This 177-nucleotide RNA was probed chemically with DMS and 2A3. The reactions ran in a buffer of 150 mM KOAc, 10 mM MgCl2 and 150 mM bicine (pH 8.5), at 24 C. 2A3 adducts were read by reverse transcription with SuperScript II with manganese. For DMS the reverse transcriptase was MarathonRT.
[RMDB]
RNA sequence: GGGAACGACUCGAGUAGAGUCGAAAAGAUAUGGACCUGAACUACACGUUGAUGAGCGACGAAGUCGGAAACGACAGAGCUCGUAGACGUGCAGGUCCUAAGUCAAACAAUAGCUUCGGCUAUUGAAGACUCUGACAAUCUUCGGAUUGUCAGAGUCAAAAGAAACAACAACAACAAC
Reactivity to DMS in 0.01 (KOAc 150mM, MgCl2 10mM, bicine 150mM(pH8.5), 24C), signal-to-noise 1, nucleotides 027 to 126: g000a230u010a300u000g000g010a000c000c020u000g010a130a010c120u000a300c040a010c000g000u020u000g010a090u040g010a010g000c000g030a090c300g040a110a100g000u000c000g000g000a000a050a160c000g000a020c000a010g010a210g000c000u000c000g000u000a080g000a000c000g040u010g090c000a010g030g010u050c010c000u000a000a040g000u000c060a170a050a300c010a000a000u000a000g000c000u000u010c160g070g020c050u000a010u010u000g000a080a130
Reactivity to 2A3 in 0.01 (KOAc 150mM, MgCl2 10mM, bicine 150mM(pH8.5), 24C), signal-to-noise 1, nucleotides 027 to 126: g060a000u010a030u230g010g040a000c050c000u000g010a040a040c010u140a000c170a000c020g020u000u070g090a150u080g010a080g000c050g300a300c000g100a240a060g010u000c010g000g080a110a010a050c010g010a000c010a010g040a010g000c000u030c030g000u030a010g030a030c000g010u020g000c000a000g000g000u060c010c000u000a040a020g040u000c020a090a060a120c010a060a000u000a000g000c000u040u030c300g120g000c000u010a000u040u010g050a000a000